[RMDB]
RNA sequence: GGGAACGACUCGAGUAGAGUCGAAAAUAUUCUCUAGCAGAGGAGAAACCCUCAUGGAUGUCUUUAUGCACUCAACUAUUGGCAUCAAAUCUGCUUUCAGUAUAACUGGACUUGGAGAAAGUGAGGACCUUAUGUACGGGUUCGCCCGUACAUAAGGAAAAGAAACAACAACAACAAC
Reactivity to 2A3 in 0.01 (KOAc 150mM, MgCl2 10mM, bicine 150mM(pH8.5), 24C), signal-to-noise 2, nucleotides 027 to 126: u080a030u130u040c010u000c010u030a010g000c020a000g040a010g040g090a020g000a040a100a050c020c020c000u010c020a120u230g200g030a000u010g000u000c000u060u070u100a130u240g070c100a030c090u270c100a130a090c020u000a030u040u030g000g000c010a000u030c030a030a050a080u000c000u010g000c000u010u020u020c000a010g000u010a070u000a300a120c030u020g000g000a020c010u040u140g120g030a090g020a030a130a040g040u020g060a010g040g030a020
Reactivity to DMS in 0.01 (KOAc 150mM, MgCl2 10mM, bicine 150mM(pH8.5), 24C), signal-to-noise 2, nucleotides 027 to 126: u020a130u010u000c010u000c000u000a090g000c070a050g040a050g010g000a090g020a030a050a120c060c010c030u000c130a080u000g030g000a030u000g000u000c000u000u000u000a040u020g010c050a110c180u000c170a060a090c090u000a020u000u000g000g010c000a020u000c020a070a110a150u010c020u000g000c010u000u010u000c000a010g000u000a080u000a140a080c080u010g000g000a020c260u000u000g000g010a080g020a050a110a120g000u000g000a040g000g000a220